The record gives the reactivity of an RNA of 177 nucleotides to 2A3 and DMS.
RNA sequence: GGGAACGACUCGAGUAGAGUCGAAAACAGCGUGUCGGCGAUCCCCGUCAGGAUUGGCACGGUCAGCGAGUUGAGACUGCUAGGGCGGUUGAUGCGCACCGACAACACUCUGUCGGUCAGGGUGACGACGACUGUGUUUCUUCGGAAACACAGUCGUAAAAGAAACAACAACAACAAC
Reactivity to 2A3 in 0.01 (KOAc 150mM, MgCl2 10mM, bicine 150mM(pH8.5), 24C), signal-to-noise 1, nucleotides 027 to 126: c000a030g020c010g000u040g010u050c010g020g020c060g060a100u130c040c000c020c000g050u010c010a000g040g030a110u030u070g060g000c020a000c090g000g080u230c080a060g160c050g030a010g030u040u030g050a030g000a030c000u000g040c020u040a050g180g070g000c050g000g010u040u060g030a050u000g010c000g000c030a030c010c010g020a030c050a110a020c090a090c070u080c000u000g080u100c020g000g050u060c010a070g030g000g020u060g040a080c060g000
Reactivity to DMS in 0.01 (KOAc 150mM, MgCl2 10mM, bicine 150mM(pH8.5), 24C), signal-to-noise 2, nucleotides 027 to 126: c060a160g000c060g000u000g030u000c030g010g050c050g010a090u000c000c000c010c060g030u000c050a120g000g020a210u030u000g000g010c040a070c020g000g020u000c220a090g030c070g000a030g030u010u010g000a150g010a150c010u010g000c060u000a080g000g040g050c170g000g000u010u000g010a100u000g010c000g000c060a120c060c030g000a000c030a040a120c110a110c120u010c110u000g020u000c060g000g010u000c050a090g000g000g000u000g000a070c200g000

For 2A3, 1,359 sequencing reads were counted. The reactions ran in a buffer of 150 mM KOAc, 10 mM MgCl2 and 150 mM bicine (pH 8.5), at 24 C. The data come from the RNA Mapping Database (RMDB), library OK2TRN. DMS adducts were read by reverse transcription with MarathonRT.